Overview
Chemical mapping of a 207-nucleotide RNA with 2A3. Conditions: 150 mM KOAc, 10 mM MgCl2 and 150 mM bicine (pH 8.5), 24 C. 2A3 adducts were read by reverse transcription with SuperScript II with manganese. It was measured as part of the RMDB library M2RFPK.

[RMDB]
RNA sequence: GGGAACGACUCGAGUAGAGUCGAAAACUCAAUGUAGGGAAUAACAUUGAAUUGAUACAAAUACCUUUUUCGGUGUAGGGAAAAACACCGAAUUGCUACAAAUACCUUUCUCAAUGUAGGGAAUAACAAAACAGGCAUCGCUUCGGCGAUGCCUGAACGUUUACUCAUGCUUCGGCAUGAGUAAACGAAAAGAAACAACAACAACAAC
Reactivity to 2A3 in 0.01 (KOAc 150mM, MgCl2 10mM, bicine 150mM(pH8.5), 24C), signal-to-noise 2, nucleotides 027 to 156: c020u000c010a010a010u070g010u080a130g000g100g110a090a130u110a100a000c000a000u000u010g040a050a050u110u200g050a070u070a260c060a040a150a030u190a100c020c000u000u000u000u000u000c010g000g000u000g000u000a000g020g020g070a210a080a070a000a000c000a000c010c000g000a010a000u040u020g020c000u050a100c030a060a070a090u080a120c010c010u050u100u000c030u040c030a140a120u100g010u030a040g040g030g040a030a050u130a110a000c050a020a050a020a010c000a010g040g090c000a010u000c010g000c030u080u160c190g060g000c000g000a000u000g000c000c000u000g010a000a000